[RMDB]
RNA sequence: GGGAACGACUCGAGUAGAGUCGAAAAGGCAUGCUUUCAGCCACGAUGAUUACCACAGAUUCCGUUGCGCCUUUGGACUGGCUGCAUCAUCGCAUGCCGAGGUUUUUAAACAACGACGAGCUUGCCAAGUUGCUACCUUUUUCGAAAGGUAGCAACUAAAAGAAACAACAACAACAAC
Reactivity to DMS in 0.01 (KOAc 150mM, MgCl2 10mM, bicine 150mM(pH8.5), 24C), signal-to-noise 4, nucleotides 027 to 126: g000g020c010a010u000g000c010u020u000u000c050a080g000c040c060a060c060g010a180u000g000a040u000u000a110c100c040a080c100a050g010a120u000u010c050c070g010u000u010g030c060g000c060c050u010u010u030g010g010a150c170u000g010g010c050u000g020c300a050u010c090a040u000c080g010c000a040u010g000c000c000g000a080g010g000u000u000u020u000u020a050a110a120c110a050a060c050g000a080c070g010a080g000c030u000u000g000c010c040a090
Reactivity to 2A3 in 0.01 (KOAc 150mM, MgCl2 10mM, bicine 150mM(pH8.5), 24C), signal-to-noise 2, nucleotides 027 to 126: g030g000c020a010u020g020c010u040u140u080c040a040g030c000c020a020c050g050a050u120g030a010u070u160a100c010c010a040c040a090g120a270u140u070c040c060g070u130u110g010c020g020c060c000u080u060u080g050g010a020c030u000g030g000c020u030g000c020a060u130c020a020u120c060g000c020a010u040g000c000c000g000a000g000g000u010u000u020u060u230a130a140a020c030a020a030c030g050a020c010g000a010g010c000u040u040g010c000c000a030